[RMDB]
RNA sequence: GGGAACGACUCGAGUAGAGUCGAAAAAAACAGUCCACUUUACAGGGGCUCAAAUAGUGCAAUAGAAGAACCAUUAUGAACAGACUAGAAGCUGAUAUCGAUAGUUGGGUGAGAUUUGCUUAUGGCGAGCAAAAUUAUUUGUACUGUACAACGAAUGUCCUGUAUUUCUGUUCGCAGAAAUACAGGAAAAAGAAACAACAACAACAAC
Reactivity to 2A3 in 0.01 (KOAc 150mM, MgCl2 10mM, bicine 150mM(pH8.5), 24C), signal-to-noise 1, nucleotides 027 to 156: a000a000a000c150a070g010u070c110c010a050c100u250u270u150a100c080a040g040g000g020g000c000u000c040a120a120a030u070a070g010u000g030c000a000a050u030a100g020a030a010g030a060a010c040c000a040u080u020a100u250g070a010a110c100a040g030a120c070u140a100g000a100a000g100c040u030g010a010u000a000u100c040g030a040u010a030g040u010u120g010g020g040u070g050a100g000a020u170u060u060g000c000u060u000a080u150g070g040c140g000a000g080c000a000a020a000a040u170u220a000u050u040u020g040u000a040c010u070g080u090a000c050a100a000c050g060a070a000u000g070
Reactivity to DMS in 0.01 (KOAc 150mM, MgCl2 10mM, bicine 150mM(pH8.5), 24C), signal-to-noise 1, nucleotides 027 to 156: a070a030a000c020a160g060u000c000c000a060c090u040u000u010a110c070a140g060g000g030g050c000u000c010a000a090a090u000a030g090u010g000c020a050a110u010a090g000a060a110g000a090a060c100c010a090u010u000a060u030g000a070a090c050a040g010a130c120u000a130g020a110a130g010c030u000g060a060u030a040u000c060g000a130u010a030g010u000u000g020g010g060u000g000a060g000a130u010u000u000g000c020u000u000a030u000g060g020c100g000a070g000c050a030a030a020a040u020u000a030u010u010u010g000u000a010c020u000g000u000a030c090a090a120c100g000a030a140u010g020
Source: RMDB library OK3TST, as collected in RNAgym. Chemical mapping of a 207-nucleotide RNA with 2A3 and DMS. The 2A3 profile rests on 387 reads. Values cover nucleotides 27 to 156. The RNA was probed in 150 mM KOAc, 10 mM MgCl2 and 150 mM bicine (pH 8.5) at 24 C. For DMS, 1,659 sequencing reads were counted.